[RMDB]
RNA sequence: GGGAACGACUCGAGUAGAGUCGAAAAACAAAUGAUCCAGCGUCGCAAUGCUUUUCGCCAGCGUGAUCGGAUCAUGCUCGACCGGCAGCGCCACCGCGGUGGCAAGCCGGAUCCGCGACGUCACCGCCUCAGUGACUCGAUUCGUCGAGUCACUGAGAAAAGAAACAACAACAACAAC
Reactivity to DMS in 0.01 (KOAc 150mM, MgCl2 10mM, bicine 150mM(pH8.5), 24C), signal-to-noise 1, nucleotides 027 to 126: a100c230a100a070a050u000g000a060u010c020c030a100g020c100g040u000c030g020c000a070a200u060g000c030u000u010u030u000c140g030c070c170a250g010c130g060u000g000a060u010c180g000g000a300u000c010a010u000g010c030u020c040g020a100c030c000g000g020c000a070g030c290g010c040c000a030c100c140g060c260g020g030u000g090g000c000a060a100g030c000c030g040g020a040u000c080c050g000c070g060a030c120g000u020c060a100c060c040g000c160
Reactivity to 2A3 in 0.01 (KOAc 150mM, MgCl2 10mM, bicine 150mM(pH8.5), 24C), signal-to-noise 1, nucleotides 027 to 126: a000c110a020a140a020u110g040a040u010c030c020a030g020c040g050u070c020g000c060a110a070u150g050c050u090u160u200u210c130g000c080c020a010g000c000g040u030g020a050u080c080g080g010a070u000c010a000u040g010c010u030c030g020a020c010c000g010g020c000a050g060c000g020c000c000a040c000c020g030c180g070g000u010g000g040c000a020a010g000c010c030g000g000a000u040c010c070g050c020g010a000c020g050u020c020a040c110c000g050c010
The data come from the RNA Mapping Database (RMDB), library OK2TST. An RNA of 177 nucleotides, treated with DMS and 2A3 and read out base by base. The 2A3 profile rests on 1,236 reads. For DMS, 574 sequencing reads were counted. Conditions: 150 mM KOAc, 10 mM MgCl2 and 150 mM bicine (pH 8.5), 24 C.